[RMDB]
RNA sequence: GGGAACGACUCGAGUAGAGUCGAAAAGAUAUGGAUCAUACUACCCACCCUCCCCACCAAGAAUCAUUCGGAAACGAAUGACUUGAGGGAGGUAUGAUCCUAAGUCAAAGCGCCGUUCGCGGCGCAACGGUAUAAUCUGGUUCGCCAGAUUAUACCGAAAAGAAACAACAACAACAAC
Reactivity to 2A3 in 0.01 (KOAc 150mM, MgCl2 10mM, bicine 150mM(pH8.5), 24C), signal-to-noise 4, nucleotides 027 to 126: g050a050u170a100u300g000g020a010u010c000a010u020a120c080u160a160c040c010c010a100c030c030c000u000c030c020c000c000a130c040c010a020a010g040a110a230u030c000a010u000u010c000g000g010a060a050a060c010g010a000a010u010g000a000c010u010u030g020a110g020g030g020a000g010g000u000a000u010g000a000u000c010c010u010a150a010g120u130c090a160a100a050g000c000g000c030c000g060u090u170c300g020c000g150g020c020g000c000a000a010
Reactivity to DMS in 0.01 (KOAc 150mM, MgCl2 10mM, bicine 150mM(pH8.5), 24C), signal-to-noise 3, nucleotides 027 to 126: g010a100u010a160u000g000g020a010u000c000a000u010a050c230u000a230c020c000c010a190c190c020c020u000c000c000c000c020a120c140c010a000a010g000a120a080u000c000a010u000u010c000g010g010a130a070a160c000g010a010a010u000g000a050c020u000u000g000a090g000g000g000a070g010g000u000a020u000g010a000u000c000c000u010a020a110g000u000c100a050a110a100g020c000g000c000c010g000u000u010c220g030c010g020g010c000g030c000a010a020

The data come from the RNA Mapping Database (RMDB), library TTRDEL. An RNA of 177 nucleotides, treated with 2A3 and DMS and read out base by base. 2A3 adducts were read by reverse transcription with SuperScript II with manganese. For DMS the reverse transcriptase was MarathonRT. The RNA was probed in 150 mM KOAc, 10 mM MgCl2 and 150 mM bicine (pH 8.5) at 24 C.